[RMDB]
Chemical mapping of a 177-nucleotide RNA with DMS. The reactions ran in a buffer of 150 mM KOAc, 10 mM MgCl2 and 150 mM bicine (pH 8.5), at 24 C.
RNA sequence: GGGAACGACUCGAGUAGAGUCGAAAAGCACUCGGCCUACAGGGUUGUGCCUUUCAAUCUACUGUUGCUGAGCUGCAACGUCUCAAAAUGAAGGUAGGUAAAACCCGGGAGUAUUGAUUUAUUUUGCGUAACAGCACAACUUCGGUUGUGCUGUUACAAAAGAAACAACAACAACAAC
Reactivity to DMS in 0.01 (KOAc 150mM, MgCl2 10mM, bicine 150mM(pH8.5), 24C), signal-to-noise 1, nucleotides 027 to 126: g000c100a120c060u000c040g020g020c010c090u000a040c100a120g030g000g010u000u020g000u010g000c020c020u010u000u000c120a030a100u000c040u000a050c020u000g020u000u000g000c030u000g000a050g040c120u010g010c000a020a090c070g000u000c080u000c090a050a060a100a100u000g000a060a100g000g000u000a030g000g000u000a050a070a070a060c050c000c040g040g000g030a140g000u000a090u000u020g010a070u000u000u030a120u010u000u000u000g010c300
DMS adducts were read by reverse transcription with MarathonRT. It was measured as part of the RMDB library OK2TRN. The DMS profile rests on 870 reads.